[RMDB]
RNA sequence: GGGAACGACUCGAGUAGAGUCGAAAAAUGUCAGGGAGAAACUUAGAAAGGUCAUGCUCCGCUAUCUCAAGGACAUCAACGUUCAGGCCCUUUUGAUGGCGGCUCUUCUGCUUGAUGAUGGGUUUGGUCAUAGGUCCGGUUUCGACCGGACCUAUGAAAAAGAAACAACAACAACAAC
Reactivity to DMS in 0.01 (KOAc 150mM, MgCl2 10mM, bicine 150mM(pH8.5), 24C), signal-to-noise 2, nucleotides 027 to 126: a030u010g000u000c030a080g020g000g000a030g020a050a080a100c190u000u000a160g000a030a090a070g000g010u010c140a080u060g010c030u060c030c010g000c020u000a010u000c040u010c040a030a000g000g010a010c010a070u080c050a100a150c300g030u000u010c210a070g010g000c020c000c010u020u000u030u060g010a050u000g000g000c020g020g010c300u040c060u000u020c030u000g000c040u000u000g000a060u000g020a070u010g020g000g000u000u000u000g010g010
Reactivity to 2A3 in 0.01 (KOAc 150mM, MgCl2 10mM, bicine 150mM(pH8.5), 24C), signal-to-noise 2, nucleotides 027 to 126: a000u130g010u030c030a040g020g070g000a030g050a070a050a030c050u120u100a080g190a180a100a050g060g020u050c040a030u170g010c010u070c040c000g000c010u020a000u000c010u010c000a000a000g020g000a020c000a120u220c090a120a160c190g100u210u100c050a040g110g080c000c000c000u010u020u000u020g020a010u010g000g000c000g020g000c040u030c030u140u060c020u070g220c010u070u040g020a040u000g010a040u050g110g000g000u040u060u080g120g010
An RNA of 177 nucleotides, treated with DMS and 2A3 and read out base by base. The DMS profile rests on 2,632 reads.